[RMDB]
RNA sequence: GGGAACGACUCGAGUAGAGUCGAAAAGGGGUCAUAGAGGGUAGGUGCAGGGUCUCUACCCACCUUAUACUGAAGCCUCCACGGUAUAAGAGGAGACCUGGAAGCCUACCUACCCACCUAUGACGGAGGCACCCAAAGCGUCUCUUCGGAGACGCAACAGUGACUUAGUCUUCGGACUAAGUCACUGAAAAGAAACAACAACAACAAC
Reactivity to 2A3 in 0.01 (KOAc 150mM, MgCl2 10mM, bicine 150mM(pH8.5), 24C), signal-to-noise 1, nucleotides 027 to 156: g020g000g010g030u020c000a000u010a000g020a010g000g000g000u000a010g000g050u110g080c130a060g000g010g030u000c000u020c010u050a150c040c060c000a020c000c000u000u000a000u000a000c000u000g060a240a040g020c000c000u000c020c000a000c000g000g000u000a010u000a010a000g000a010g010g010a020g000a000c000c020u000g050g100a090a020g020c010c000u000a000c000c000u000a000c010c000c000a050c000c010u000a000u020g030a050c060g000g000a010g010g000c000a030c000c020c010a060a130a000g010c000g000u000c000u000c000u050u110c200g080g000a020g000a000c000g000c000a000a010
The record gives the reactivity of an RNA of 207 nucleotides to 2A3. Values cover nucleotides 27 to 156. Source: RMDB library RNAMAK, as collected in RNAgym.